[RMDB]
RNA sequence: GGGAACGACUCGAGUAGAGUCGAAAAGCCGAUGAAUUGCCGAGAAGCCUGGCUCGAAAUCGUCGACGCAUCGACGACGGUCCUGCCAUGAGACCGUAACGAGGACAUGGCGCCUCGAAUGGCGUCGUAUAACAUGAGUGGUUCGCCACUCAUGUAACGAGUGGAAGUACUUCGGUACUUCCACUCGAAAAGAAACAACAACAACAAC
Reactivity to 2A3 in 0.01 (KOAc 150mM, MgCl2 10mM, bicine 150mM(pH8.5), 24C), signal-to-noise 2, nucleotides 027 to 156: g040c020c030g000a040u190g030a020a150u120u110g050c080c000g030a050g000a170a000g020c010c010u060g000g000c000u000c070g050a130a120a060u010c000g010u050c020g000a060c170g000c150a160u120c020g020a020c010g020a010c000g000g000u000c010c010u060g090c000c030a030u030g050a040g000a230c000c000g020u050a000a040c020g030a000g000g020a000c020a250u230g110g000c140g000c000c000u010c060g060a050a060u060g000g020c010g020u070c120g000u020a170u040a170a040c000a000u000g000a000g000u000g010g010u050u010c140g040c060c000a000c000u000c000a000u000g000u000a010a000